[RMDB]
RNA sequence: GGGAACGACUCGAGUAGAGUCGAAAACACCUCAUCGGGCACCUGGGCUGUCAAAUGGGCAUGAUUUAGUGGCAGUCCUCGCCAUCCGUGUUGGCUCCUUGGCAGUCUCUGAGCGCAUUGAAGGCGGCAUUCUGCACCAAUUCGUUGGUGCAGAAUGAAAAGAAACAACAACAACAAC
Reactivity to DMS in 0.01 (KOAc 150mM, MgCl2 10mM, bicine 150mM(pH8.5), 24C), signal-to-noise 3, nucleotides 027 to 126: c100a130c030c010u000c050a070u000c110g010g010g010c050a050c050c020u000g020g000g010c010u010g010u000c020a010a060a090u000g000g010g010c030a070u000g000a070u000u010u010a120g020u000g020g000c000a100g010u010c090c080u010c090g020c000c020a040u010c100c120g000u000g010u000u000g020g000c010u000c020c130u000u010g010g000c020a030g010u000c020u000c050u000g000a100g040c030g010c020a080u000u000g010a070a070g010g000c040g000g020
Reactivity to 2A3 in 0.01 (KOAc 150mM, MgCl2 10mM, bicine 150mM(pH8.5), 24C), signal-to-noise 3, nucleotides 027 to 126: c030a030c000c010u030c020a090u060c060g080g070g000c020a020c020c040u040g000g020g000c010u000g000u000c000a000a050a140u120g020g030g040c060a100u140g110a160u160u190u210a060g010u030g000g040c010a020g060u090c000c050u020c040g000c010c010a030u040c040c050g090u050g060u110u130g100g000c010u000c000c000u030u010g020g000c010a030g000u010c000u000c010u070g030a030g040c070g000c030a040u020u110g050a090a040g090g010c040g010g000
Chemical mapping of a 177-nucleotide RNA with DMS and 2A3. For DMS, 5,566 sequencing reads were counted. For 2A3 the reverse transcriptase was SuperScript II with manganese. The 2A3 profile rests on 3,666 reads. Values cover nucleotides 27 to 126. Conditions: 150 mM KOAc, 10 mM MgCl2 and 150 mM bicine (pH 8.5), 24 C.